[RMDB]
RNA sequence: GGGAACGACUCGAGUAGAGUCGAAAAGGAGAUGUCUCAGGCAAUGGACACCGGCCCGCCAGGUGCCUCUCAGGCAUGGCCGCCAUGGACAAGCAGGGGCGCAGGCGCGGGCAGCUUAGGGGCCAGCGCCCUGCGUCGGAUUCGUCCGACGCAGGGCAAAAGAAACAACAACAACAAC
Reactivity to DMS in 0.01 (KOAc 150mM, MgCl2 10mM, bicine 150mM(pH8.5), 24C), signal-to-noise 5, nucleotides 027 to 126: g000g010a100g010a100u010g010u000c010u010c070a080g000g000c060a100a110u010g010g010a070c030a050c030c030g010g020c010c010c020g010c010c020a160g000g020u000g010c000c000u000c020u000c170a200g010g010c020a060u000g000g010c090c050g020c100c120a070u000g000g000a060c040a050a100g030c070a070g000g000g010g010c010g020c010a050g010g020c130g020c010g000g000g020c000a010g010c100u010u020a070g020g000g010g010c020c030a120g010c150
Reactivity to 2A3 in 0.01 (KOAc 150mM, MgCl2 10mM, bicine 150mM(pH8.5), 24C), signal-to-noise 3, nucleotides 027 to 126: g100g010a140g030a170u090g040u040c010u020c090a040g050g030c060a050a170u100g020g010a020c030a020c060c010g030g020c010c000c000g000c010c010a110g140g000u010g020c000c000u010c020u020c030a020g030g090c030a040u030g050g020c120c080g110c080c030a120u200g000g060a140c060a090a010g030c050a020g030g000g000g000c010g000c010a010g040g050c080g000c010g070g000g000c010a000g000c000u020u130a030g000g000g080g000c000c010a030g040c030